[RMDB]
RNA sequence: GGGAACGACUCGAGUAGAGUCGAAAAGCUCGGUGACGACUGUGAGGUGCGGGUCGAAGUGUCCGAAGCCGUCACCGCGGGCGAGGAACUGCUGCCGGACGGCCUCGGCACCUUCGAGAGUGUCGCAACGUCCGCCGGUUCCAGCGGCGUCGCCAUCGUCUAAUGCCCAAUUCGUUGGGCAUUAGACAAAAGAAACAACAACAACAAC
Reactivity to 2A3 in 0.01 (KOAc 150mM, MgCl2 10mM, bicine 150mM(pH8.5), 24C), signal-to-noise 1, nucleotides 027 to 156: g030c000u000c100g000g000u060g030a000c010g140a140c020u060g070u090g100a130g030g050u070g060c010g000g000g080u030c040g030a010a000g020u020g060u130c010c000g040a000a000g000c000c000g000u000c020a070c180c000g040c080g000g010g000c030g020a170g030g170a100a050c030u110g020c000u040g050c050c020g020g000a040c000g000g000c000c010u010c000g030g000c000a000c000c010u080u140c040g040a110g000a060g020u060g010u000c000g010c040a070a040c060g080u040c000c000g000c040c000g030g020u070u110c050c000a000g040c020g020g000c030g000u010c000g030c000c020a090u120c060